[RMDB]
RNA sequence: GGGAACGACUCGAGUAGAGUCGAAAAGUGGUCGAGUGCGAAGCACUGGGGUAGAGAAAUAAAUAGAGAGAGAUCUUCCCCGUCAGUCAGUCACUCUCUGUCUGAAUCUCUCUCUCAAAGACCACGACAUAGGUCGUCGAUUCGUCGACGACCUAUGAAAAGAAACAACAACAACAAC
Reactivity to DMS in 0.01 (KOAc 150mM, MgCl2 10mM, bicine 150mM(pH8.5), 24C), signal-to-noise 4, nucleotides 027 to 126: g010u000g010g000u010c010g000a030g000u000g020c030g030a120a110g010c010a010c000u030g000g000g000g000u040a020g010a030g000a030a050a090u050a110a060a030u020a020g000a010g010a030g020a080g000a040u020c160u000u000c000c010c010c190g010u010c080a120g000u010c060a040g000u010c070a110c030u000c050u010c000u000g000u000c060u020g030a140a150u000c020u010c000u000c010u000c000u010c070a070a100a090g000a010c000c010a000c000g010a130
Reactivity to 2A3 in 0.01 (KOAc 150mM, MgCl2 10mM, bicine 150mM(pH8.5), 24C), signal-to-noise 6, nucleotides 027 to 126: g010u010g010g000u010c010g020a030g020u030g020c120g170a210a040g040c020a000c030u030g000g010g030g050u150a010g040a000g080a100a150a050u210a040a070a020u140a030g000a000g000a000g000a000g000a010u020c040u050u060c040c000c000c010g040u040c000a010g010u010c010a000g020u030c010a050c090u030c030u000c010u010g030u020c030u020g070a120a080u020c000u000c000u000c000u000c000u000c030a040a080a020g000a010c000c000a000c000g000a000